[RMDB]
An RNA of 207 nucleotides, treated with 2A3 and read out base by base.
The reactions ran in a buffer of 150 mM KOAc, 10 mM MgCl2 and 150 mM bicine (pH 8.5), at 24 C.
Source: RMDB library M2RFPK, as collected in RNAgym.
RNA sequence: GGGAACGACUCGAGUAGAGUCGAAAAAGGCACUCCAUACCCUACUCCGACUCAAUACGUCCCCGUCGUACAGAAUGGUAACAUAUCUCUCCAAAUAUCUGAGCUUGGCUAUACGGGGAAACCCAACAAAAGCAAUUGUGGUUCGCCACAAUUGCAAGCAGUGAGACUAGUUCGCUAGUCUCACUGCAAAAGAAACAACAACAACAAC
Reactivity to 2A3 in 0.01 (KOAc 150mM, MgCl2 10mM, bicine 150mM(pH8.5), 24C), signal-to-noise 2, nucleotides 027 to 156: a030g070g010c030a030c030u030c000c010a070u130a170c040c030c000u000a000c000u020c030c050g050a030c020u020c100a080a120u120a120c010g100u010c000c020c000c010g010u080c030g010u020a030c010a040g020a090a050u040g090g000u130a110a050c060a120u190a170u100c030u000c000u030c030c010a120a000a120u140a140u040c040u060g050a070g040c020u040u080g040g000c010u020a010u000a170c050g020g000g000g000a000a050a030c030c000c030a030a030c040a100a120a000a020g030c000a010a010u000u000g000u000g000g070u050u070c250g030c070c000a000c000a000a000u000u000g050c000a000a000